[RMDB]
RNA sequence: GGGAACGACUCGAGUAGAGUCGAAAACAGAGUAUAACUAGUGUCGCUUCAUCUCGGCUUACGUGAAGACUCCAUCCGAAACGUACGACGAUACUAGCGCAUCGGUAGGCCGGAAGCAUGCGAAAGGAUGGUCGAUGCAUGCGAAAGGAUGGUCGCCGCCUAACCUGGAAUUCGUUCCAGGUUAGGCAAAAGAAACAACAACAACAAC
Reactivity to 2A3 in 0.01 (KOAc 150mM, MgCl2 10mM, bicine 150mM(pH8.5), 24C), signal-to-noise 2, nucleotides 027 to 156: c070a000g070a030g120u240a110u100a300a090c050u030a030g020u000g020u060c000g010c080u070u030c140a210u050c060u010c060g030g030c040u040u090a030c020g040u060g030a060a040g050a060c060u030c000c000a020u000c010c010g010a100a080a090c110g020u140a180c060g050a020c010g000a030u000a020c020u020a010g060c090g020c090a060u070c100g060g000u040a030g050g000c010c000g010g000a030a060g000c000a010u000g000c040g050a130a000a040g060g030a030u080g080g000u130c050g040a020u190g000c000a000u020g000c000g000a030a070a000g050g030a000u040g010g030u000c010g000c060c040
This 207-nucleotide RNA was probed chemically with 2A3. The reactions ran in a buffer of 150 mM KOAc, 10 mM MgCl2 and 150 mM bicine (pH 8.5), at 24 C. For 2A3 the reverse transcriptase was SuperScript II with manganese.